[RMDB]
RNA sequence: GGGAACGACUCGAGUAGAGUCGAAAAGAUAUGGAGUCCUUGUCAGCUCCGAAAGUUUGAUGACCGAGCGUCGGAAACGACGCUCGCAAGAACUAGUAGCUGAGCUUGGAUUUAGGACUCCUAAGUCCUUAUUAUUUAUCUUCGGAUAAAUAAUAAGAAAAGAAACAACAACAACAAC
Reactivity to 2A3 in 0.01 (KOAc 150mM, MgCl2 10mM, bicine 150mM(pH8.5), 24C), signal-to-noise 2, nucleotides 027 to 126: g020a080u150a170u270g000g000a010g010u000c000c020u000u000g000u020c000a020g030c000u040c050c030g010a010a030a030g000u040u030u030g220a300u160g040a140c070c050g000a000g000c000g000u000c030g020g050a070a070a040c010g000a010c000g010c020u010c000g000c010a100a190g000a020a010c020u030a030g130u070a020g040c300u230g010a010g030c040u080u210g220g010a080u300u260u090a020g000g010a020c020u000c000c000u010a010a010g020u000c000
Reactivity to DMS in 0.01 (KOAc 150mM, MgCl2 10mM, bicine 150mM(pH8.5), 24C), signal-to-noise 3, nucleotides 027 to 126: g000a110u020a300u000g000g000a030g020u000c010c010u000u000g010u000c000a050g000c000u000c010c000g000a140a230a140g010u000u000u000g010a160u000g020a160c300c000g000a010g010c010g000u000c010g000g000a120a100a210c010g010a030c000g010c000u000c000g010c040a010a130g000a000a000c000u010a090g000u010a160g000c300u000g010a010g010c020u010u010g010g000a020u000u030u000a010g010g000a010c020u000c000c010u000a010a100g000u000c030